Structure probing data (2A3 and DMS) for a 177-nucleotide construct. The data come from the RNA Mapping Database (RMDB), library TTRDES. Conditions: 150 mM KOAc, 10 mM MgCl2 and 150 mM bicine (pH 8.5), 24 C.
RNA sequence: GGGAACGACUCGAGUAGAGUCGAAAAGAUAUGGAAGAAUAGGACAUGACCUAGUUUCGGAAACGAAACAGGGUCAACAGCCUAUCUUCCUAAGUCAAACCAUAUAGGACUUCGGUCCUAUAUGGAACAUUACGUCAUUGUUCGCAAUGACGUAAUGAAAAGAAACAACAACAACAAC
Reactivity to 2A3 in 0.01 (KOAc 150mM, MgCl2 10mM, bicine 150mM(pH8.5), 24C), signal-to-noise 7, nucleotides 027 to 126: g010a010u030a020u070g010g030a000a020g040a230a170u030a030g030g010a030c300a300u300g000a010c040c000u050a110g010u000u010u000c010g000g000a010a010a000c000g000a010a010a010c050a050g060g000g000u010c030a020a020c040a010g000c000c000u000a010u000c010u000u000c000c000u000a010a000g000u010c030a120a020a100c010c000a000u000a000u000a000g000g010a010c010u070u070c300g140g010u010c000c000u010a000u000a000u000g000g000a020a000
Reactivity to DMS in 0.01 (KOAc 150mM, MgCl2 10mM, bicine 150mM(pH8.5), 24C), signal-to-noise 8, nucleotides 027 to 126: g000a010u000a040u010g000g000a020a010g010a140a030u000a000g000g000a030c030a300u020g010a010c000c000u010a240g020u000u000u000c000g020g000a010a020a040c000g000a010a010a000c000a300g010g010g000u000c000a050a060c200a220g000c000c000u000a010u000c000u000u000c000c000u000a000a060g000u000c010a150a110a290c010c000a010u000a000u000a000g010g010a020c000u000u020c290g050g010u000c000c000u000a000u000a000u000g010g000a060a120